Structure probing data (2A3) for a 207-nucleotide construct. The data come from the RNA Mapping Database (RMDB), library M2RFPK. The reactions ran in a buffer of 150 mM KOAc, 10 mM MgCl2 and 150 mM bicine (pH 8.5), at 24 C. The 2A3 profile rests on 517 reads.
RNA sequence: GGGAACGACUCGAGUAGAGUCGAAAAGGGUGAGACCUAGGAACCGUAGGGGUAUUCUCAAAGGAAGCUUUUGCAGUGACGCCCAUGUAAGUGGGAAAUAACAACAGAACUCGUAUGAGUAGCCUAAUAAAUCGGACCUUCUUCGGAAGGUCCGAAAGAGACGUUCAAAGUUCGCUUUGAACGUCUCAAAAGAAACAACAACAACAAC
Reactivity to 2A3 in 0.01 (KOAc 150mM, MgCl2 10mM, bicine 150mM(pH8.5), 24C), signal-to-noise 1, nucleotides 027 to 156: g110g030g010u090g060a080g020a090c050c060u040a030g030g090a070a130c080c030g000u130a070g100g030g020g000u020a060u090u050c000u000c000a090a070a000g050g000a050a000g000c020u010u010u120u110g000c000a030g000u030g040a030c000g020c030c000c000a010u050g040u220a100a060g000u060g000g000g160a060a000a030u220a070a090c140a010a000c020a030g030a040a010c010u070c030g050u180a080u250g000a010g050u040a030g000c000c000u070a070a010u090a090a150a030u080c010g000g000a000c000c000u030u000c020u010u010c030g020g000a000a000g000g020u000c000c000g010a000a000a000